Conditions: 150 mM KOAc, 10 mM MgCl2 and 150 mM bicine (pH 8.5), 24 C. An RNA of 177 nucleotides, treated with DMS and 2A3 and read out base by base. For 2A3, 19,563 sequencing reads were counted. It was measured as part of the RMDB library OK2TRN.

RNA sequence: GGGAACGACUCGAGUAGAGUCGAAAAGGGCACGUUCGAGAUCGUGAUGACGGUCGGCGCGCGUGACGGCGUGCCGGCCACCGCGCAGUACGUCAACGACAUUCGCGCCGAGGUCGAUCGCGCGAAGCGUAAGAGCACGGUUCGCCGUGCUCUUACGAAAAGAAACAACAACAACAAC
Reactivity to DMS in 0.01 (KOAc 150mM, MgCl2 10mM, bicine 150mM(pH8.5), 24C), signal-to-noise 7, nucleotides 027 to 126: g000g000g010c060a060c030g010u000u010c050g020a100g000a090u000c010g020u000g000a120u010g010a090c090g030g010u000c010g010g010c000g010c010g010c030g020u000g020a150c280g000g000c010g030u000g010c010c000g020g000c020c010a010c040c020g010c050g010c070a090g010u010a080c070g020u000c040a100a100c110g000a090c090a190u000u000c020g000c000g000c040c060g010a070g010g020u010c180g000a100u010c050g000c010g000c010g000a020a050g010
Reactivity to 2A3 in 0.01 (KOAc 150mM, MgCl2 10mM, bicine 150mM(pH8.5), 24C), signal-to-noise 7, nucleotides 027 to 126: g030g010g010c030a010c060g030u070u050c050g030a040g010a280u060c010g020u060g060a150u150g080a050c100g010g010u000c000g000g000c010g000c000g000c020g030u090g080a030c030g070g010c010g010u020g000c020c000g000g010c010c000a010c000c000g030c010g000c020a040g050u150a090c050g030u030c060a100a040c060g070a020c020a160u040u020c010g000c020g000c080c110g030a030g030g100u200c070g050a250u050c010g010c000g000c000g030a020a010g030
The DMS profile rests on 12,283 reads.